[RMDB]
RNA sequence: GGGAACGACUCGAGUAGAGUCGAAAAGCAGUUUACCAAAAUUGCCCAAGAAACAGUCGAUGCUGCUCCAUAUUUCCGAGAGGCUCUUCAACGGCUGUACACAUGGAUGCGAAAAUUCAAUCUCGGAAUUACGGUACUGAUUCGUCAGUACCGUAAUAAAAGAAACAACAACAACAAC
Reactivity to 2A3 in 0.01 (KOAc 150mM, MgCl2 10mM, bicine 150mM(pH8.5), 24C), signal-to-noise 6, nucleotides 027 to 126: g020c010a020g000u080u100u100a220c050c030a060a070a060a080u050u050g030c020c030c020a030a040g100a070a180a010c020a010g020u020c010g020a040u080g010c050u010g010c010u030c020c000a090u060a160u140u090u000c000c000g010a010g000a010g030g030c020u030c030u160u080c050a090a050c030g020g000c000u030g050u130a030c070a000c010a090u130g050g010a040u090g060c060g160a100a040a020a050u210u150c060a040a070u030c000u010c020g020g000a010
Reactivity to DMS in 0.01 (KOAc 150mM, MgCl2 10mM, bicine 150mM(pH8.5), 24C), signal-to-noise 7, nucleotides 027 to 126: g010c020a010g020u000u000u010a130c300c210a070a020a030a030u000u000g010c010c030c020a170a100g000a110a100a100c040a030g010u000c010g020a100u000g010c110u000g000c040u010c040c050a100u010a100u000u010u000c010c010g000a040g020a060g010g010c040u000c130u000u000c110a080a130c120g020g010c010u000g020u000a070c130a070c170a090u010g020g000a060u000g010c050g000a060a060a040a060u010u010c100a070a100u000c010u000c010g000g000a050